The record gives the reactivity of an RNA of 177 nucleotides to 2A3 and DMS.
The data come from the RNA Mapping Database (RMDB), library RFMREP.
Values cover nucleotides 27 to 126.
Conditions: 150 mM KOAc, 10 mM MgCl2 and 150 mM bicine (pH 8.5), 24 C.
For DMS the reverse transcriptase was MarathonRT.
The DMS profile rests on 4,445 reads.
[RMDB]
RNA sequence: GGGAACGACUCGAGUAGAGUCGAAAAUAGAUCAGUGCUUGGCACCUAGUAAGCACUCAGUAUAUACUUGUUGAGUGCCUGCUAUGUGCCAGGCAUUGUGCUGAAAACCCAUGACUUCGGUCAUGGGCUCACUAGUUACCUUCGGGUAACUAGUGAGAAAAGAAACAACAACAACAAC
Reactivity to 2A3 in 0.01 (KOAc 150mM, MgCl2 10mM, bicine 150mM(pH8.5), 24C), signal-to-noise 2, nucleotides 027 to 126: u160a030g070a060u100c000a000g010u010g000c010u020u020g010g000c000a000c000c010u000a000g010u010a050a000g000c000a000c010u010c000a000g040u030a040u020a020u040a200c140u150u100g000u020u010g010a010g000u000g020c010c010u000g010c010u010a000u020g000u000g020c010c000a010g000g000c000a000u000u000g000u000g000c040u130g060a120a070a130a090c000c000c000a010u000g000a000c020u060u080c290g090g000u000c010a000u010g010g010g000
Reactivity to DMS in 0.01 (KOAc 150mM, MgCl2 10mM, bicine 150mM(pH8.5), 24C), signal-to-noise 3, nucleotides 027 to 126: u010a070g000a130u000c010a000g020u000g000c010u000u010g000g000c000a010c010c050u000a010g020u000a010a030g000c000a000c000u000c010a020g010u000a050u000a170u000a150c300u010u000g010u000u000g010a020g010u000g010c010c050u000g010c000u000a000u000g000u000g020c000c010a000g000g000c000a000u000u000g010u010g020c070u000g000a100a050a090a300c010c000c000a010u000g000a020c000u000u010c220g020g000u000c000a010u000g000g000g000